This 207-nucleotide RNA was probed chemically with 2A3 and DMS. 2A3 adducts were read by reverse transcription with SuperScript II with manganese. DMS (dimethyl sulfate) methylates the pairing face of unpaired adenines and cytosines. The 2A3 profile rests on 1,764 reads. The reactions ran in a buffer of 150 mM KOAc, 10 mM MgCl2 and 150 mM bicine (pH 8.5), at 24 C.

[RMDB]
RNA sequence: GGGAACGACUCGAGUAGAGUCGAAAAUCGUGGCAGCUGCACUCAGAGUCCCUCACCUAAUCUGCCCAGCCUCCACCCUCAACAGAGCCACUCCAUCACAAUGGCAGCCACUGCAGGUUGUGCUGCGUCAUGUUACUGUGUGCACCUUGAUGGCUUAUCGGUAAAUUUAGUUCGCUAAAUUUACCGAAAAAGAAACAACAACAACAAC
Reactivity to 2A3 in 0.01 (KOAc 150mM, MgCl2 10mM, bicine 150mM(pH8.5), 24C), signal-to-noise 2, nucleotides 027 to 156: u110c030g010u060g020g000c050a030g020c040u080g020c020a050c040u080c070a060g010a000g150u080c000c020c030u030c010a040c010c040u050a080a110u110c010u050g030c000c030c020a010g020c000c000u040c000c000a060c010c000c000u060c020a050a060c020a130g050a030g080c000c010a040c010u010c020c000a040u050c030a010c020a070a070u050g020g000c020a010g020c020c000a040c020u120g020c050a060g020g020u110u050g030u130g070c030u010g010c020g070u060c010a010u070g020u020u060a050c070u030g000u000g050u080g040c010a070c030c010u080u090g020a040u070g060g000c010u040u070a070
Reactivity to DMS in 0.01 (KOAc 150mM, MgCl2 10mM, bicine 150mM(pH8.5), 24C), signal-to-noise 2, nucleotides 027 to 156: u000c070g030u000g000g010c010a070g020c030u000g020c020a120c050u000c030a120g000a180g000u010c010c050c000u000c010a060c040c020u020a040a110u010c060u000g000c000c050c020a120g010c010c030u030c020c030a080c070c010c020u000c040a060a070c060a080g000a060g000c000c020a070c050u000c040c000a110u010c070a080c100a050a050u010g010g010c050a080g020c080c020a080c020u010g010c080a040g020g000u020u000g030u000g020c030u000g000c030g000u000c030a040u010g010u030u010a030c010u000g000u000g030u000g000c020a080c040c030u010u020g010a060u000g000g000c020u000u000a100